[RMDB]
RNA sequence: GGGAACGACUCGAGUAGAGUCGAAAAGGCGGAUGGCGGUACGUUAUUUCUCGAUGAAGUUGGGGAUAUCCCUCUUGAAUUGCAACCUAAGCUCCUGCUUGUUCUACAAGAGCGAGAAAUAGAGCGGGUCCAGAGUUACAUUCGUGUAACUCUGGACAAAAGAAACAACAACAACAAC
Reactivity to DMS in 0.01 (KOAc 150mM, MgCl2 10mM, bicine 150mM(pH8.5), 24C), signal-to-noise 3, nucleotides 027 to 126: g040g030c080g010g000a090u000g010g060c030g010g020u010a060c070g020u000u000a080u000u000u010c030u000c050g000a110u020g020a060a040g030u010u000g000g000g000g000a150u000a130u000c040c150c010u000c070u000u010g000a090a070u010u010g000c090a070a070c050c110u000a130a140g000c010u000c050c060u000g020c030u010u010g010u000u020c060u010a060c150a020a090g000a030g010c060g000a020g000a040a050a060u000a050g000a060g000c040g010g020
Reactivity to 2A3 in 0.01 (KOAc 150mM, MgCl2 10mM, bicine 150mM(pH8.5), 24C), signal-to-noise 1, nucleotides 027 to 126: g040g000c020g030g050a070u070g050g020c050g000g000u030a040c020g010u000u020a030u070u030u010c070u030c010g070a070u140g090a060a050g120u160u080g000g020g030g020a070u100a100u190c020c060c010u020c000u030u060g070a110a080u210u070g010c000a000a030c010c030u150a130a010g010c010u060c030c030u040g060c000u010u020g040u050u000c030u030a130c050a110a040g030a010g030c020g000a020g060a020a090a020u110a020g080a020g020c010g030g000

This 177-nucleotide RNA was probed chemically with DMS and 2A3. The RNA was probed in 150 mM KOAc, 10 mM MgCl2 and 150 mM bicine (pH 8.5) at 24 C. The DMS profile rests on 2,220 reads. It was measured as part of the RMDB library OK2TST.